[RMDB]
RNA sequence: GGGAACGACUCGAGUAGAGUCGAAAACAUCUUUACUCCCUACACAGUGACUCCAGCUUGGGAGGGGCAGGGCUAGGCUGAGCCAGCACUCCCUGUGGUGUCUGCCUGCCACGUGCAGCUCUGGAGUAAAACCUGGAGAAGUUCGCUUCUCCAGGAACGUUGGUGAACUGUUCGCAGUUCACCAACGAAAAGAAACAACAACAACAAC
Reactivity to 2A3 in 0.01 (KOAc 150mM, MgCl2 10mM, bicine 150mM(pH8.5), 24C), signal-to-noise 2, nucleotides 027 to 156: c030a110u120c080u060u110u040a000c000u010c000c000c000u100a060c060a000c000a130g070u050g100a000c000u000c010c000a050g010c100u080u140g050g010g000a040g010g000g080g030c040a090g000g040g010c050u180a040g130g070c020u050g090a030g080c030c010a020g000c000a000c020u030c020c000c000u010g050u030g020g020u030g040u010c040u030g030c000c030u000g030c050c000a100c100g090u140g020c000a000g010c050u030c040u080g000g000a000g000u000a000a000a000a020c010c000u020g000g000a000g000a000a000g000u080u050c090g020c110u000u030c020u060c050c020a000g000g010a010a010
An RNA of 207 nucleotides, treated with 2A3 and read out base by base. For 2A3, 1,175 sequencing reads were counted. The reactions ran in a buffer of 150 mM KOAc, 10 mM MgCl2 and 150 mM bicine (pH 8.5), at 24 C. Source: RMDB library M2RFOK, as collected in RNAgym.